[RMDB]
RNA sequence: GGGAACGACUCGAGUAGAGUCGAAAAGGUUCGUUCGCGAACCGAGUUGAUAUGGAUAGGGAGGAGGCAACAACUAAGACAGAGGGUCGGAAACGACCCUUCGAGUUGUUGAACUACCUCUUAACUAUCCUAAGUCUGAGAGGCUGUUCGCAGCCAAUUUAUAAAUCGUGUUCGCACGAUUUAUAAAAAAAGAAACAACAACAACAAC
Reactivity to DMS in 0.01 (KOAc 150mM, MgCl2 10mM, bicine 150mM(pH8.5), 24C), signal-to-noise 3, nucleotides 027 to 156: g020g020u000u000c000g000u000u010c300g050c050g010a000a010c000c000g020a050g010u000u010g010a130u000a150u020g000g010a050u000a090g010g010g010a120g020g000a080g010g010c020a020a090c030a010a040c020u010a100a220g010a280c270a080g020a030g010g050g020u000c020g000g010a130a090a250c000g020a020c000c000c000u000u000c010g000a070g020u000u000g010u000u010g010a090a070c010u010a090c000c000u000c000u000u000a050a130c010u000a050u000c020c020u000a050a080g000u000c030u010g010a170g030a160g040g020c000u010g010u000u000c140g030c030a050g000c000c020a020a100
This 207-nucleotide RNA was probed chemically with DMS. Conditions: 150 mM KOAc, 10 mM MgCl2 and 150 mM bicine (pH 8.5), 24 C. For DMS the reverse transcriptase was MarathonRT. It was measured as part of the RMDB library RNAMAK.